[RMDB]
RNA sequence: GGGAACGACUCGAGUAGAGUCGAAAACCACACGGAGAGCGUACCGUCCGGGACACCCCGGGAGCGCUGCGUGAGGGACGGUGCGAGAGGCGAUGCUGGCCAGCCGCGGACAUGAUCCAUGUAGAUGCAUCAAUCCAUGUUUCGACAUGGAUUGAUGAAAAGAAACAACAACAACAAC
Reactivity to 2A3 in 0.01 (KOAc 150mM, MgCl2 10mM, bicine 150mM(pH8.5), 24C), signal-to-noise 4, nucleotides 027 to 126: c010c010a000c000a010c020g080g010a120g000a020g110c020g000u040a050c030c020g050u000c000c000g030g030g150a240c050a140c050c010c010c000g030g030g000a030g000c050g000c010u070g040c030g030u070g070a140g020g000g010a010c030g010g020u040g040c040g030a120g000a020g050g030c030g050a040u140g010c040u050g040g030c020c000a020g000c040c020g020c020g030g010a010c020a050u150g020a070u040c040c010a020u100g040u100a060g040a170u150g050
Reactivity to DMS in 0.01 (KOAc 150mM, MgCl2 10mM, bicine 150mM(pH8.5), 24C), signal-to-noise 7, nucleotides 027 to 126: c000c010a200c140a060c070g010g000a110g000a070g010c020g020u010a110c100c090g020u010c010c030g010g010g000a190c220a130c210c020c020c000g020g000g020a080g000c030g020c030u000g000c050g020u000g000a130g010g010g000a050c060g010g010u000g010c030g010a120g000a100g010g000c040g000a100u010g010c050u010g000g000c040c040a110g000c050c030g000c070g000g000a080c060a070u000g010a080u000c030c020a080u010g010u010a080g010a170u010g000